[RMDB]
RNA sequence: GGGAACGACUCGAGUAGAGUCGAAAAUAUUACAUCUUCGGAUGUAAUAACUGGUGGUGGCUGGCUUGUUGCUAGUGGCGCAACUGUUGCGAUGACUGCGCAAUCGCUCUGAAUUCGUUCAGAGCAACCUCUUCGUCAUAUUCGUAUGACGAAGAGGAAAAGAAACAACAACAACAAC
Reactivity to 2A3 in 0.01 (KOAc 150mM, MgCl2 10mM, bicine 150mM(pH8.5), 24C), signal-to-noise 2, nucleotides 027 to 126: u040a000u020u000a000c000a000u010c010u000u030c180g140g010a000u000g000u010a000a000u020a010a030c050u050g060g010u020g000g060u060g030g040c050u000g000g000c020u020u100g060u040u040g040c020u060a080g060u020g120g000c020g000c020a050a080c050u100g070u150u080g030c020g040a040u120g050a060c050u070g020c030g000c010a020a060u120c160g010c010u010c000u000g020a020a020u090u050c200g040u100u010c020a010g000a010g000c010a000a020
Reactivity to DMS in 0.01 (KOAc 150mM, MgCl2 10mM, bicine 150mM(pH8.5), 24C), signal-to-noise 3, nucleotides 027 to 126: u010a010u000u000a010c000a000u000c010u000u020c160g020g010a000u010g010u000a000a010u000a040a140c090u010g000g030u010g010g040u000g000g040c030u000g020g020c070u000u000g000u010u010g010c040u000a070g020u010g020g000c060g000c030a040a090c100u000g010u010u000g020c030g010a060u010g010a080c100u010g000c040g010c080a070a080u000c220g010c010u010c000u000g000a010a040u000u000c260g010u000u000c000a010g010a010g000c020a040a050